[RMDB]
RNA sequence: GGGAACGACUCGAGUAGAGUCGAAAACUUCCUGGUCUUCCGGAGAUCUUUCUCGAGCUCCUCCGCCUUUUUCCUUGCUGUGAUCCAUUUCUCGAGGGUCUCCUCCCUUGUUCCCCUUCGUCCUCUCAACGUCAUAUGUUCGCAUAUGACAAAAGAAACAACAACAACAAC
Reactivity to 2A3 in 0.01 (KOAc 150mM, MgCl2 10mM, bicine 150mM(pH8.5), 24C), signal-to-noise 9, nucleotides 027 to 129: c020u050u050c000c000u020g010g020u050c030u090u020c050c030g020g010a040g020a070u030c020u020u120u020c040u020c020g020a020g000c010u040c010c000u020c000c010g020c000c000u050u050u010u050u040c020c010u040u080g030c040u050g050u080g060a070u050c020c020a080u050u090u040c040u010c010g020a090g010g010g010u010c020u010c010c000u030c010c000c000u010u040g020u030u030c000c000c010c000u030u070c030g070u030c010c000u020c000u030c020a050a070c090
Reactivity to DMS in 0.01 (KOAc 150mM, MgCl2 10mM, bicine 150mM(pH8.5), 24C), signal-to-noise 9, nucleotides 027 to 129: c210u010u010c040c010u030g020g000u040c030u020u000c030c020g040g010a070g000a070u020c000u030u050u020c040u020c030g000a050g000c100u000c010c010u000c030c030g010c060c040u010u010u010u010u010c020c020u000u010g010c060u000g020u000g020a060u010c040c030a100u020u030u020c030u000c030g020a050g010g010g000u000c040u010c050c000u010c010c010c000u010u010g000u000u000c000c010c000c040u000u040c010g020u030c020c020u010c030u010c060a100a100c180